[RMDB]
Source: RMDB library RNAMAK, as collected in RNAgym.
An RNA of 207 nucleotides, treated with 2A3 and read out base by base.
RNA sequence: GGGAACGACUCGAGUAGAGUCGAAAAGGGGUCCACUUUUGACGGACGAAACUGGAGCUUGGAUUUAUAGGCUGAAGCCUCCACGGCCUAUUGUCAGCUCCAGUAGUAGUCCGAUAAGUGGACGGAGGCACCCAAAACAUGCGGUUCGCCGCAUGAACCUAAACAACGCCUUCGGGCGUUGUUUAGGAAAAGAAACAACAACAACAAC
Reactivity to 2A3 in 0.01 (KOAc 150mM, MgCl2 10mM, bicine 150mM(pH8.5), 24C), signal-to-noise 1, nucleotides 027 to 156: g040g020g040g010u040c030c000a010c020u090u050u070u170g210a120c050g000g000a010c000g020a010a010a020c000u000g020g000a020g020c010u080u220g180g000a080u290u300u020a000u040a010g000g000c000u000g020a140a030g080c020c010u030c010c030a000c010g000g000c010c000u000a000u010u020g000u000c000a000g030c000u000c000c000a000g000u000a000g010u000a000g000u000c000c000g000a010u000a000a030g000u020g010g010a000c010g000g000a020g000g000c020a100c020c010c010a000a060a000a000c000a000u010g000c000g040g020u050u090c240g020c100c000g000c020a000u060g000a000a020